Source information:
The record gives the reactivity of an RNA of 207 nucleotides to 2A3. The RNA was probed in 150 mM KOAc, 10 mM MgCl2 and 150 mM bicine (pH 8.5) at 24 C. It was measured as part of the RMDB library OK3TST. For 2A3 the reverse transcriptase was SuperScript II with manganese.
[RMDB]
RNA sequence: GGGAACGACUCGAGUAGAGUCGAAAAUUAAGGCACAUAAUUGUGCUUUGAGCUUUGAUUAGAUGUAAUCAAAUACAAUGACAAGAACACUGCACUUUCUUGUUGGACAUCGCUUACAGUGGACCCACAGUACACGGUGGCCAGAAACUGUGCUAUCCACGAGCUAUGGUUUCGACCAUAGCUCGUGAAAAGAAACAACAACAACAAC
Reactivity to 2A3 in 0.01 (KOAc 150mM, MgCl2 10mM, bicine 150mM(pH8.5), 24C), signal-to-noise 1, nucleotides 027 to 156: u110u030a030a000g010g040c040a000c000a020u220a100a170u300u100g000u010g000c000u010u010u010g000a000g030c070u070u040u000g010a010u010u050a160g160a180u180g240u230a010a000u000c000a020a010a000u140a040c060a020a100u220g090a020c000a000a090g020a040a020c030a020c170u110g050c000a000c020u070u050u000c020u000u060g050u000u010g000g040a000c000a060u050c000g030c100u000u040a010c020a050g010u020g000g150a160c000c170c000a040c030a020g010u030a030c000a000c130g020g000u000g000g000c000c020a030g000a030a010a010c060u070g000u020g000c000u070a090u010c060